[RMDB]
RNA sequence: GGGAACGACUCGAGUAGAGUCGAAAAAAAGCGUCAUCCACCGGGUGACGACCGAUGGGACAGGCGUGAUCGAUGAUGAACGAGUCGCUGCUGUCGGAGCGCAGGUCUCCGUUGACAAUCUCAUCAUUGACAGCGUUAACUCGAUCACCGACGCGACGGAAUACGUCCCAUUCGUGGGACGUAUUCCAAAAGAAACAACAACAACAAC
Reactivity to 2A3 in 0.01 (KOAc 150mM, MgCl2 10mM, bicine 150mM(pH8.5), 24C), signal-to-noise 1, nucleotides 027 to 156: a050a030a000g040c000g040u050c040a070u000c000c110a140c170c100g100g000g000u000g000a000c020g070a060c030c000g070a070u090g010g010g050a060c090a160g000g090c000g080u020g010a290u000c000g000a000u000g070a030u000g040a030a050c100g050a050g000u050c000g000c000u020g000c000u000g030u050c060g000g000a000g000c190g000c230a140g170g000u120c020u030c000c000g080u010u220g040a090c110a020a060u060c020u030c060a170u030c040a030u070u160g020a040c020a000g010c000g100u060u120a070a070c000u020c020g020a070u000c000a000c010c010g000a000c030g000c000g000a010c120
Source: RMDB library OK3TST, as collected in RNAgym. An RNA of 207 nucleotides, treated with 2A3 and read out base by base. The RNA was probed in 150 mM KOAc, 10 mM MgCl2 and 150 mM bicine (pH 8.5) at 24 C. For 2A3, 421 sequencing reads were counted.